[RMDB]
RNA sequence: GGGAACGACUCGAGUAGAGUCGAAAAGGCCAAACCGGCACUGGCGGCAUAGCUUGAGGUGGUAACGCGGAAUACGAGAGAUGGUGUCGUCACACCCUAUGAGCUGUAAUCCGGGCGACCUGCGCCAGCCUCCUAAUCCGUUCGCGGAUUAGGAGGCAAAAGAAACAACAACAACAAC
Reactivity to 2A3 in 0.01 (KOAc 150mM, MgCl2 10mM, bicine 150mM(pH8.5), 24C), signal-to-noise 2, nucleotides 027 to 126: g050g030c000c000a060a110a130c080c040g000g030c040a000c090u030g020g030c010g030g000c030a070u080a150g060c030u030u110g080a050g080g080u110g060g000u100a100a010c040g000c000g100g070a050a050u100a130c080g020a010g010a010g030a180u160g060g020u050g010u050c060g160u120c050a020c000a040c040c000c010u090a150u150g070a070g070c040u040g030u090a010a050u000c000c000g000g000g000c020g000a030c000c030u040g020c020g010c000c000a010
Reactivity to DMS in 0.01 (KOAc 150mM, MgCl2 10mM, bicine 150mM(pH8.5), 24C), signal-to-noise 2, nucleotides 027 to 126: g030g000c000c010a020a070a210c060c090g000g000c050a130c040u000g000g000c030g010g030c130a020u000a080g000c060u000u020g010a120g000g030u000g010g000u010a030a020c050g010c060g010g020a110a080u010a060c150g020a080g020a090g020a090u020g000g010u010g030u000c130g000u010c080a180c030a060c030c000c060u000a080u000g000a140g020c030u000g010u040a040a090u000c020c080g000g010g040c060g010a140c010c040u000g000c060g010c070c020a090
An RNA of 177 nucleotides, treated with 2A3 and DMS and read out base by base. The 2A3 profile rests on 1,488 reads. For 2A3 the reverse transcriptase was SuperScript II with manganese. The DMS profile rests on 1,203 reads. Conditions: 150 mM KOAc, 10 mM MgCl2 and 150 mM bicine (pH 8.5), 24 C. 2A3 is a SHAPE reagent: it acylates the 2'-hydroxyl of flexible nucleotides of all four kinds. For DMS the reverse transcriptase was MarathonRT.